[RMDB]
RNA sequence: GGGAACGACUCGAGUAGAGUCGAAAAGAUAUGGACCUCCCAAGGGAGCUCGUAUCGGAAACGAUAUUGAGCGAAGAACUUGGAGGUCCUAAGUCAAAAUCUAGCUCAUAGUUCGCUAUGAGCUAGACGAUUGUAGCUUCUUCGGAAGCUACAAUCGAAAAGAAACAACAACAACAAC
Reactivity to DMS in 0.01 (KOAc 150mM, MgCl2 10mM, bicine 150mM(pH8.5), 24C), signal-to-noise 2, nucleotides 027 to 126: g020a010u010a120u000g000g000a030c000c010u010c250c080c150a040a020g000g010g000a180g010c000u000c000g010u000a000u010c000g000g000a020a010a060c000g020a010u000a010u000u010g010a050g020c000g030a110a200g010a130a210c000u000u000g000g000a010g000g020u000c000c000u000a000a070g010u000c010a110a090a130a190u000c000u000a000g010c000u000c000a000u000a030g010u000u010c250g020c010u000a010u000g000a020g000c000u000a010g010a030
Reactivity to 2A3 in 0.01 (KOAc 150mM, MgCl2 10mM, bicine 150mM(pH8.5), 24C), signal-to-noise 1, nucleotides 027 to 126: g000a000u000a000u030g010g000a000c000c000u120c160c210c070a020a010g160g020g010a210g010c020u020c010g000u000a000u010c000g040g010a000a010a000c010g010a000u010a010u230u300g000a000g000c020g040a060a050g100a000a020c000u000u010g010g000a000g000g000u000c000c000u000a000a020g000u000c010a000a030a030a220u000c000u000a000g000c000u020c010a000u010a000g040u040u080c260g020c150u010a000u000g000a000g000c000u000a000g010a010